[RMDB]
This 207-nucleotide RNA was probed chemically with DMS and 2A3. The 2A3 profile rests on 7,519 reads. Reactivities are given for positions 27 through 156. Conditions: 150 mM KOAc, 10 mM MgCl2 and 150 mM bicine (pH 8.5), 24 C. It was measured as part of the RMDB library M2RFPK. The DMS profile rests on 4,070 reads.

RNA sequence: GGGAACGACUCGAGUAGAGUCGAAAAUCCGACGAGCUGAACGCUUUCGAAGGAAAGCUUGACCAGCUAAUCUUCUGCAACGCCAUUACGAGGACUGCCCUUAGAGGCUCAUGGCGAUAGCUCACCCAAAACUAUUUGAGGUUCGCCUCAAAUAGAAGUUAUUUGAUCAGUUCGCUGAUCAAAUAACAAAAGAAACAACAACAACAAC
Reactivity to DMS in 0.01 (KOAc 150mM, MgCl2 10mM, bicine 150mM(pH8.5), 24C), signal-to-noise 3, nucleotides 027 to 156: u010c030c040g040a120c070g010a060g020c000u000g000a080a110c190g020c020u010u020u000c030g000a240a220g000g010a040a050a030g010c000u000u000g020a200c140c020a060g000c000u010a060a060u000c020u000u000c040u000g010c010a140a160c040g000c020c040a130u010u000a150c100g020a150g000g030a140c070u000g000c000c000c030u000u010a130g000a200g020g050c030u000c050a060u000g020g010c030g000a170u000a070g010c030u020c020a100c010c020c040a100a090a110a230c010u010a000u000u000u000g020a020g030g030u000u000c300g020c000c000u000c000a000a000a000u000a010g010a080a100
Reactivity to 2A3 in 0.01 (KOAc 150mM, MgCl2 10mM, bicine 150mM(pH8.5), 24C), signal-to-noise 7, nucleotides 027 to 156: u030c020c010g050a060c090g030a020g010c010u020g030a130a020c070g010c020u080u120u090c070g070a070a060g110g010a060a040a010g000c000u100u130g070a070c020c040a010g000c000u030a070a090u040c060u130u020c040u060g010c020a050a060c010g000c010c010a040u080u120a070c100g040a080g090g070a090c080u100g020c000c000c000u090u170a110g040a130g130g000c010u020c030a010u020g000g000c010g030a070u100a030g000c020u020c030a090c000c050c030a010a110a050a120c010u000a000u000u000u000g000a010g030g010u030u060c170g050c040c000u000c000a000a000a000u000a000g000a030a010